[RMDB]
RNA sequence: GGGAACGACUCGAGUAGAGUCGAAAAUGCAUGUUCAAUUUCUGCUGGUGCCAGUGGAUCCAAAGACAGGAUUAAAGUAUUAAAGGAGUGCUGAAUGUGUUCUAGGAACCUGUCUGCAAGUCGCUUCUUCAAGGUGCUCCUGCUGAGGACAUGGAGAUAUUACCUGAUGCUUCGGCAUCAGGUAAUAAAAAGAAACAACAACAACAAC
Reactivity to 2A3 in 0.01 (KOAc 150mM, MgCl2 10mM, bicine 150mM(pH8.5), 24C), signal-to-noise 2, nucleotides 027 to 156: u080g010c000a030u040g030u040u010c090a080a120u070u020u050c060u070g060c020u030g010g050u010g080c070c000a010g030u070g080g040a040u000c040c020a040a020a000g020a020c000a000g030g010a010u090u260a110a080a000g060u070a080u100u240a180a020a000g020g010a000g000u030g030c020u080g070a150a130u160g060u020g000u010u030c050u100a070g060g060a060a040c010c000u000g060u050c020u040g040c020a030a030g020u040c020g080c110u070u080c030u080u080c070a100a060g000g020u060g000c000u000c020c000u010g030c030u040g030a040g000g000a000c040a040u040g050g000a060g040a050
Reactivity to DMS in 0.01 (KOAc 150mM, MgCl2 10mM, bicine 150mM(pH8.5), 24C), signal-to-noise 2, nucleotides 027 to 156: u000g030c020a050u010g010u010u000c060a050a150u000u000u010c020u000g050c050u000g040g030u000g000c020c050a190g010u000g040g040a100u000c040c010a060a120a240g050a030c040a060g030g010a230u020u000a060a130a140g020u000a190u010u010a070a130a070g030g000a070g070u000g000c040u000g010a090a140u010g000u010g000u010u010c060u020a180g010g010a080a100c010c030u000g000u010c020u010g020c040a080a040g010u000c010g030c010u000u000c020u010u010c010a030a200g040g030u020g020c030u000c060c020u000g020c060u010g010a160g000g000a090c020a050u020g010g030a130g020a140